[RMDB]
RNA sequence: GGGAACGACUCGAGUAGAGUCGAAAAUACAUUGCACGGCCCCUGGGAUUCAUCUCGACAGCAGGAAAUAAGUUUGUGGAAGCCAUCAUCGCAAUUGACAUGUUCAAUGAGCUUCAGGACUUAGCUACGAUACAGACUGAUUCGUCAGUCUGUAUCGAAAAGAAACAACAACAACAAC
Reactivity to 2A3 in 0.01 (KOAc 150mM, MgCl2 10mM, bicine 150mM(pH8.5), 24C), signal-to-noise 4, nucleotides 027 to 126: u050a000c020a040u050u160g050c040a010c070g100g000c050c000c000c000u040g020g020g020a060u130u080c020a080u050c030u030c040g060a050c030a030g030c030a030g070g110a060a060a070u120a050a050g070u060u060u090g300u210g200g030a020a010g000c020c000a030u030c010a020u050c070g040c060a060a080u060u070g020a050c060a100u140g050u030u110c020a040a030u020g000a030g040c010u030u010c020a030g020g030a010c010u000u020a020g060c030u070a040
Reactivity to DMS in 0.01 (KOAc 150mM, MgCl2 10mM, bicine 150mM(pH8.5), 24C), signal-to-noise 4, nucleotides 027 to 126: u010a100c100a100u000u000g000c050a080c100g020g010c030c030c030c030u000g010g030g000a070u000u010c090a060u010c030u000c060g010a100c130a060g000c060a070g000g000a060a080a110u000a030a030g010u010u000u000g010u010g010g010a020a040g000c010c040a080u010c070a060u000c150g030c100a100a050u000u010g010a030c090a090u010g020u000u000c080a050a050u010g000a110g010c010u000u000c020a070g000g000a050c030u000u000a030g020c100u000a140
Structure probing data (2A3 and DMS) for a 177-nucleotide construct. High DMS reactivity at an A or C suggests that its Watson-Crick edge is free. The RNA was probed in 150 mM KOAc, 10 mM MgCl2 and 150 mM bicine (pH 8.5) at 24 C. For 2A3 the reverse transcriptase was SuperScript II with manganese. It was measured as part of the RMDB library OK2TST. The DMS profile rests on 4,581 reads. DMS adducts were read by reverse transcription with MarathonRT.